[RMDB]
RNA sequence: GGGAACGACUCGAGUAGAGUCGAAAACGUUCCUGUGAUGGUGUUACACUGCUGGGAGAGGAAUGUCUUGUCUUCAUCCGGUUGCCUGCGCCACUGUUCUGGUGGCGUCUGGCACUGGUGCAAGACACGCUAUUUUGAAGUUCGCUUCAAAAUAGCGAAAAGAAACAACAACAACAAC
Reactivity to DMS in 0.01 (KOAc 150mM, MgCl2 10mM, bicine 150mM(pH8.5), 24C), signal-to-noise 3, nucleotides 027 to 126: c100g020u000u000c000c000u010g020u010g010a070u000g010g000u000g000u000u010a110c090a050c040u010g020c040u000g010g000g000a090g000a080g010g000a070a060u010g000u000c050u000u000g010u000c040u000u010c050a080u010c010c020g000g010u010u010g020c000c000u000g000c000g000c000c000a010c000u000g010u000u020c200u020g020g020u000g000g000c000g020u010c070u010g010g010c010a010c000u010g000g010u000g010c140a000a010g000a000c010a120
Reactivity to 2A3 in 0.01 (KOAc 150mM, MgCl2 10mM, bicine 150mM(pH8.5), 24C), signal-to-noise 8, nucleotides 027 to 126: c020g010u010u010c000c000u010g030u020g040a120u050g020g050u030g030u090u060a060c070a020c050u060g010c030u040g000g030g010a050g010a020g020g050a070a040u070g030u040c030u060u040g010u010c010u060u060c050a070u070c030c010g020g000u130u150g000c000c000u000g000c000g020c000c000a000c000u080g160u300u170c170u300g010g000u000g000g000c010g000u020c040u010g000g000c000a000c000u010g000g000u000g000c050a000a000g000a000c000a000